[RMDB]
RNA sequence: GGGAACGACUCGAGUAGAGUCGAAAAUCUUCGGAACUGGCAGCCCCCUGCAUGCUGUCUAAUUGCCCCAAGAAAACAGUGACGUGUGUUUAGGAGCAUGCUCCUGUUGGCCUCCAUUUACAGGAUCGGUGAUAACAGUGUUCGCACUGUUAUCACCAAAAGAAACAACAACAACAAC
Reactivity to DMS in 0.01 (KOAc 150mM, MgCl2 10mM, bicine 150mM(pH8.5), 24C), signal-to-noise 2, nucleotides 027 to 126: u010c040u010u000c090g010g010a060a080c130u020g000g000c020a060g020c030c020c010c030c030u020g010c080a030u000g000c010u010g010u000c020u000a030a050u010u010g010c080c020c010c080a100a110g030a080a080a070a070c060a060g000u010g010a060c110g010u000g020u010g000u000u000u010a110g010g010a110g000c020a020u010g010c040u000c020c010u000g020u010u000g000g020c050c030u020c040c020a090u000u000u000a080c110a110g000g000a110u010c100
Reactivity to 2A3 in 0.01 (KOAc 150mM, MgCl2 10mM, bicine 150mM(pH8.5), 24C), signal-to-noise 1, nucleotides 027 to 126: u000c020u080u120c100g050g040a100a130c100u060g000g000c020a040g030c030c000c000c000c020u020g000c000a020u060g000c000u000g000u000c080u050a090a090u090u120g080c000c060c000c000a030a030g130a110a070a020a000c020a020g060u030g170a030c030g030u040g000u000g020u070u110u020a050g000g030a060g050c000a030u020g020c020u000c000c000u010g020u040u020g020g100c000c020u070c010c020a070u080u030u030a050c050a040g100g000a100u240c060

The record gives the reactivity of an RNA of 177 nucleotides to DMS and 2A3. The RNA was probed in 150 mM KOAc, 10 mM MgCl2 and 150 mM bicine (pH 8.5) at 24 C. Reactivities are given for positions 27 through 126. 2A3 adducts were read by reverse transcription with SuperScript II with manganese. The 2A3 profile rests on 1,098 reads. DMS adducts were read by reverse transcription with MarathonRT.